[RMDB]
RNA sequence: GGGAACGACUCGAGUAGAGUCGAAAACUCGAGGAAAACAUCUCCCAAGAAGAAGCGGGAACAAUCUCAAGAAGAGGAGGAUUCCCCGAGACGCUGACGGAAACCCCGGGAACAAGGAAACAGGAGGAAACUCUCUCGUUCGCGAGAGAGAAAAGAAACAACAACAACAAC
Reactivity to DMS in 0.01 (KOAc 150mM, MgCl2 10mM, bicine 150mM(pH8.5), 24C), signal-to-noise 5, nucleotides 027 to 129: c020u020c010g010a040g000g000a050a060a070a120c180a110u010c120u020c030c030c010a080a060g040a060a020g000a030a010g040c120g010g010g010a020a050c090a090a070u040c060u040c070a050a050g060a070a040g000a100g030g010a020g000g000a090u030u030c070c030c040c000g020a070g000a080c000g010c050u090g030a030c000g000g060a030a050a070c060c050c010c050g000g000g130a050a030c130a060a110g000g000a050a050a080c100a040g060g030a030g020g040a030a100a080
Reactivity to 2A3 in 0.01 (KOAc 150mM, MgCl2 10mM, bicine 150mM(pH8.5), 24C), signal-to-noise 4, nucleotides 027 to 129: c010u000c020g000a020g050g030a000a080a030a020c010a130u050c030u010c040c030c030a030a020g050a020a010g020a030a010g020c050g010g000g000a010a010c030a020a130u070c030u020c090a030a060g050a040a010g010a070g050g010a000g000g000a010u030u050c010c000c000c000g010a010g000a030c060g020c070u040g020a030c060g020g000a050a050a030c000c000c000c010g000g010g000a030a020c020a040a030g050g010a020a050a030c030a020g040g000a000g000g000a050a020a020